[RMDB]
RNA sequence: GGGAACGACUCGAGUAGAGUCGAAAAGUUCAAGGGUGGUUAGGACCAGUCGAGACAAUCCCUAUCUGUCGAGUGCGCUGCCAAAGCUGUCGAGCCGUUUUCACGGUUUUGCCCAGCUUUAUCCUGCCCAUCAAUUACCUUUCGAGGUAAUUGAUGGAAAAGAAACAACAACAACAAC
Reactivity to 2A3 in 0.01 (KOAc 150mM, MgCl2 10mM, bicine 150mM(pH8.5), 24C), signal-to-noise 6, nucleotides 027 to 126: g060u090u080c060a060a070g030g000g040u040g010g080u120u140a080g060g080a040c020c030a070g220u030c040g030a020g000a050c030a020a070u060c000c010c000u020a080u050c060u050g120u050c020g020a020g040u080g040c040g000c030u050g000c010c030a000a000a040g000c000u010g020u050c010g010a010g000c000c000g020u040u060u110u230c140a010c010g030g000u050u030u110u170g010c020c030c000a010g000c000u030u020u030a070u020c000c010u040g030c000
Reactivity to DMS in 0.01 (KOAc 150mM, MgCl2 10mM, bicine 150mM(pH8.5), 24C), signal-to-noise 8, nucleotides 027 to 126: g020u020u010c060a060a200g000g000g020u000g010g010u010u010a120g010g010a130c070c030a050g010u000c050g010a300g000a050c070a110a120u000c030c010c010u010a100u010c060u000g010u000c040g000a070g030u000g000c040g010c020u000g000c060c070a040a040a050g010c010u000g010u010c030g000a040g000c000c010g010u000u000u000u010c190a030c030g010g010u000u000u000u000g020c150c170c010a040g010c020u000u010u000a110u010c040c030u000g010c280